Source information
This 207-nucleotide RNA was probed chemically with DMS and 2A3. The RNA was probed in 150 mM KOAc, 10 mM MgCl2 and 150 mM bicine (pH 8.5) at 24 C. For DMS, 4,046 sequencing reads were counted. Source: RMDB library RNAMAK, as collected in RNAgym. DMS adducts were read by reverse transcription with MarathonRT.

RNA sequence: GGGAACGACUCGAGUAGAGUCGAAAACCGUCUGUUUCGACAGACGGAAAAAAACCUUUGUGAGAUGGCAAGGCGUGUCCUGGCCCAUUGGGCCACAUGGAUUAUCGCUGAUGACCCAUCUCACUCUGGUAAAAAUGACAACGUUCGCGUUGUCAAAAUCUUCAUAGUUGUUCGCAACUAUGAAGAUAAAAGAAACAACAACAACAAC
Reactivity to DMS in 0.01 (KOAc 150mM, MgCl2 10mM, bicine 150mM(pH8.5), 24C), signal-to-noise 2, nucleotides 027 to 156: c000c000g020u000c010u000g000u000u000u000c290g020a120c010a000g010a010c010g000g000a010a000a050a150a020a000a030c000c000u000u000u000g010u020g070a030g030a010u000g010g000c040a070a140g020g010c020g000u000g000u000c010c000u000g010g030c000c010c000a150u000u000g030g050g020c020c020a030c080a110u030g040g010a060u010u000a110u000c070g020c010u010g000a090u000g000a070c300c000c000a020u000c000u000c010a010c010u000c000u010g020g090u000a010a070a080a110a140u000g000a060c000a010a030c000g070u000u010c220g000c170g040u000u020g000u010c000a020a030a120
Reactivity to 2A3 in 0.01 (KOAc 150mM, MgCl2 10mM, bicine 150mM(pH8.5), 24C), signal-to-noise 5, nucleotides 027 to 156: c000c000g010u000c000u000g020u000u140u130c190g120a010c000a000g000a000c000g000g000a170a000a000a000a000a000a010c000c000u000u000u020g010u010g000a000g000a000u000g000g010c060a110a120g020g000c030g000u030g000u000c000c010u030g010g020c030c010c050a240u230u300g010g000g010c020c010a060c070a100u160g000g000a020u070u110a130u300c010g000c010u000g020a080u070g010a020c010c000c000a000u000c000u010c000a000c000u000c000u010g020g020u070a090a070a030a010a090u080g000a000c000a000a000c000g050u070u080c300g010c010g110u000u020g000u000c000a020a000a000